An RNA of 177 nucleotides, treated with 2A3 and DMS and read out base by base. For DMS, 5,284 sequencing reads were counted.
RNA sequence: GGGAACGACUCGAGUAGAGUCGAAAAGGGAAAAUGCCAAUAGUAAUACCCUGCAAAAGGGUGACAGCAGUAAUUAGGUGCAACACCUUAGGUGUAUGCCUGUUUAAAAGGACAUAUGAGCAUAACAUCGAUAUCGAGUAUUCGUACUCGAUAUCGAAAAAGAAACAACAACAACAAC
Reactivity to 2A3 in 0.01 (KOAc 150mM, MgCl2 10mM, bicine 150mM(pH8.5), 24C), signal-to-noise 2, nucleotides 027 to 126: g100g010g000a060a100a000a040u100g020c000c020a040a080u070a030g020u010a010a040u010a130c000c020c000u000g010c070a230a200a000a040g010g000g000u020g020a000c020a040g040c020a000g050u090a040a090u130u160a050g060g030u050g020c060a060a030c000a030c070c000u030u080a140g020g000u070g040u030a030u040g000c000c000u040g070u020u140u060a090a170a020a010g060g000a020c020a020u130a040u120g070a060g020c000a040u030a090a050c010a080
Reactivity to DMS in 0.01 (KOAc 150mM, MgCl2 10mM, bicine 150mM(pH8.5), 24C), signal-to-noise 5, nucleotides 027 to 126: g010g010g010a030a070a130a060u000g020c010c050a090a080u010a100g000u000a100a100u000a070c010c000c000u010g000c250a050a060a120a030g020g000g010u000g010a060c100a110g000c070a070g000u010a050a090u000u010a050g020g010u000g020c090a100a080c080a040c010c020u000u000a070g040g030u000g010u000a080u000g010c000c010u000g010u010u010u000a060a050a080a100g010g000a050c090a020u010a050u000g010a100g020c040a060u000a060a080c180a110
For 2A3, 2,846 sequencing reads were counted. The RNA was probed in 150 mM KOAc, 10 mM MgCl2 and 150 mM bicine (pH 8.5) at 24 C. DMS adducts were read by reverse transcription with MarathonRT.